[RMDB]
RNA sequence: GGGAACGACUCGAGUAGAGUCGAAAAAAACCUAGCAUAUUGACUGGACGUGGCAAAACGAAUCAGAACAUAGGGAUGACCCUCCCAGCCCAGAAGUGUGUACUGGAUACCUUCAGAACUGACAAGGCUACGCUGUCUCAUUCGUGAGACAGCGUAGAAAAGAAACAACAACAACAAC
Reactivity to 2A3 in 0.01 (KOAc 150mM, MgCl2 10mM, bicine 150mM(pH8.5), 24C), signal-to-noise 3, nucleotides 027 to 126: a000a010a060c030c010u020a010g080c010a040u060a090u190u070g100a080c040u040g000g010a020c030g010u090g110g170c110a010a000a080a010c020g050a050a050u020c030a090g060a090a030c020a070u140a110g010g010g020a030u080g070a090c020c000c000u020c010c000c000a050g000c020c000c000a040g020a100a030g100u100g020u060g050u110a070c010u040g020g010a080u080a090c000c010u030u030c070a030g050a300a160c060u020g030a040c030a050a040g030g010
Reactivity to DMS in 0.01 (KOAc 150mM, MgCl2 10mM, bicine 150mM(pH8.5), 24C), signal-to-noise 2, nucleotides 027 to 126: a110a030a120c030c010u050a040g000c150a120u040a010u000u010g040a110c040u030g010g000a100c020g000u000g000g080c120a050a050a090a010c060g030a050a030u000c100a080g010a070a010c210a080u000a040g000g000g010a060u040g000a100c030c010c020u000c030c000c010a160g000c080c010c020a100g000a050a040g030u000g000u000g000u010a010c020u050g000g000a120u020a080c020c000u000u000c020a030g030a010a010c110u010g030a210c040a000a100g050g000

An RNA of 177 nucleotides, treated with 2A3 and DMS and read out base by base. For DMS, 1,901 sequencing reads were counted.